The data come from the RNA Mapping Database (RMDB), library OK1LIB. This 177-nucleotide RNA was probed chemically with DMS and 2A3.
RNA sequence: GGGAACGACUCGAGUAGAGUCGAAAACAAAAAGGUUAACGAGCGUAAUCUGGGAGAUGUAAAAGGAGUUGACAUCUCCUAGAACACCGAAAGGUGGCGGGACGUUAACCGCAUCUUUCGAAAGAAAGAUGGCUGAGGUAUUCGUACCUCAGCCAUCAAAAGAAACAACAACAACAAC
Reactivity to DMS in 0.01 (KOAc 150mM, MgCl2 10mM, bicine 150mM(pH8.5), 24C), signal-to-noise 2, nucleotides 027 to 126: c040a150a070a050a040a120g010g000u000u000a020a000c000g010a110g000c000g000u000a040a090u000c000u000g000g000g000a000g010a000u000g010u000a050a070a040a080g000g020a200g010u010u020g000a050c000a000u000c000u000c000c000u000a000g000a000a300c010a000c000c010g000a110a090a080g000g010u000g000g000c000g020g020g000a040c020g010u000u000a010a000c000c000g000c160a000u000c070u000u000u000c020g000a100a040a080g000a010a010a040
Reactivity to 2A3 in 0.01 (KOAc 150mM, MgCl2 10mM, bicine 150mM(pH8.5), 24C), signal-to-noise 3, nucleotides 027 to 126: c070a000a080a050a010a020g030g000u020u030a010a000c000g010a030g110c020g000u030a060a140u030c000u000g020g000g000a000g010a010u020g010u020a020a080a150a190g220g070a200g070u160u090g090a000c000a000u000c000u000c000c000u000a000g000a000a000c000a000c000c000g090a050a000a040g030g000u020g030g030c000g000g010g040a020c010g000u020u010a000a000c000c000g000c010a030u020c000u000u010u050c030g090a130a110a070g080a030a030a000